[RMDB]
RNA sequence: GGGAACGACUCGAGUAGAGUCGAAAAGCAUUGGGAAACUUAAUCAAAAGUGCAUCAAAACUUUCCCUAAACGAAAUCAAAAUCGUUAUGAUGCACUUUUGACAUCGAUUAAGAUGAAUAGACACAACCUUUAAACUACCUUCGGGUAGUUUAAAGGAAAAGAAACAACAACAACAAC
Reactivity to DMS in 0.01 (KOAc 150mM, MgCl2 10mM, bicine 150mM(pH8.5), 24C), signal-to-noise 3, nucleotides 027 to 126: g010c110a080u000u020g000g000g020a140a110a080c050u000u010a060a100u000c000a040a000a020a020g000u000g030c000a000u000c010a050a130a090a150c110u000u010u000c000c010c000u010a080a010a020c010g000a020a110a050u010c300a070a060a170a090u000c010g020u010u000a240u000g000a010u000g000c000a000c000u000u000u000u020g000a090c030a020u000c040g000a160u010u010a100a140g000a030u000g010a040a060u000a070g020a110c200a040c210a050a100
Reactivity to 2A3 in 0.01 (KOAc 150mM, MgCl2 10mM, bicine 150mM(pH8.5), 24C), signal-to-noise 2, nucleotides 027 to 126: g030c030a090u160u230g070g030g060a060a090a080c040u100u070a090a080u030c010a000a010a000a000g000u000g000c000a000u000c000a000a030a000a180c030u060u000u040c010c000c000u010a030a010a010c010g000a040a020a040u240c100a070a090a020a170u020c010g020u010u020a040u090g000a010u000g000c000a000c010u010u000u000u000g000a000c000a000u030c020g180a160u150u240a140a110g000a000u020g050a090a100u090a120g140a010c040a000c010a120a070

Structure probing data (DMS and 2A3) for a 177-nucleotide construct. Conditions: 150 mM KOAc, 10 mM MgCl2 and 150 mM bicine (pH 8.5), 24 C. Reactivities are given for positions 27 through 126. 2A3 adducts were read by reverse transcription with SuperScript II with manganese. For 2A3, 1,802 sequencing reads were counted. Source: RMDB library M2PK90, as collected in RNAgym. The DMS profile rests on 1,738 reads.